[RMDB]
Chemical mapping of a 177-nucleotide RNA with 2A3.
The reactions ran in a buffer of 150 mM KOAc, 10 mM MgCl2 and 150 mM bicine (pH 8.5), at 24 C.
Values cover nucleotides 27 to 126.
It was measured as part of the RMDB library OK1LIB.

RNA sequence: GGGAACGACUCGAGUAGAGUCGAAAACUCUUUCACGGUUAGGUCUGUCUCUGGCAGAGCAGACUGUCAGGAGGACGAGGUCACCAUCUUCACGAAGCCAAAGCCAAAUUCCGCCUUGUCCUGUAAAGGGUAUAUGCCGGUUCGCCGGCAUAUACCCAAAAGAAACAACAACAACAAC
Reactivity to 2A3 in 0.01 (KOAc 150mM, MgCl2 10mM, bicine 150mM(pH8.5), 24C), signal-to-noise 1, nucleotides 027 to 126: c000u110c000u050u160u290c210a060c030g060g010u060u150a070g000g020u000c000u000g070u090c000u000c020u070g110g010c010a010g000a070g040c020a000g090a140c000u000g000u000c030a010g010g100a000g000g000a000c000g000a020g000g000u120c100a020c010c030a010u020c020u140u090c070a000c050g050a070a000g080c050c000a120a000a000g030c000c080a000a000a000u170u020c040c020g000c020c000u020u000g000u010c000c000u110g050u060a000a000a000